[RMDB]
RNA sequence: GGGAACGACUCGAGUAGAGUCGAAAAUAACAGCCAUCCACGGCAACGUGCGGAAUAGGGCCACAGAGACGAGUCUUGCCGCCGGGUUCGCCCGGCGGGAAGGGUGAAACGCGGUAACCUCCACCUGACCACAAGACUGAUUCGUCAGUCUUGUGGUAAAAGAAACAACAACAACAAC
Reactivity to 2A3 in 0.01 (KOAc 150mM, MgCl2 10mM, bicine 150mM(pH8.5), 24C), signal-to-noise 4, nucleotides 027 to 126: u110a030a030c040a020g020c020c010a040u070c050c000a080c060g020g030c040a010a040c050g000u070g020c050g020g020a090a080u110a160g030g000g040c020c020a030c020a030g040a000g010a020c160g040a010g020u020c000u000u020g160c020c000g000c000c010g020g000g000u010u030c100g060c010c000c010g020g000c020g000g000g000a000a000g010g000g000u070g020a030a040a000c140g020c060g090g020u030a040a060c000c020u000c010c000a010c010c030u020g040
Reactivity to DMS in 0.01 (KOAc 150mM, MgCl2 10mM, bicine 150mM(pH8.5), 24C), signal-to-noise 2, nucleotides 027 to 126: u000a120a060c160a140g000c000c020a150u000c100c040a000c090g010g000c080a070a030c030g000u000g020c050g000g020a050a080u030a050g000g000g000c040c000a170c080a010g000a080g020a040c030g000a130g030u000c030u010u000g000c010c000g040c000c010g010g010g030u030u160c230g040c000c000c030g010g000c020g000g010g010a040a020g000g000g000u010g040a070a070a020c090g010c030g000g040u020a080a020c000c000u000c020c000a060c060c030u000g000
An RNA of 177 nucleotides, treated with 2A3 and DMS and read out base by base. Conditions: 150 mM KOAc, 10 mM MgCl2 and 150 mM bicine (pH 8.5), 24 C. The 2A3 profile rests on 3,646 reads. For 2A3 the reverse transcriptase was SuperScript II with manganese. Values cover nucleotides 27 to 126. The data come from the RNA Mapping Database (RMDB), library RFM100. For DMS, 2,581 sequencing reads were counted. DMS adducts were read by reverse transcription with MarathonRT.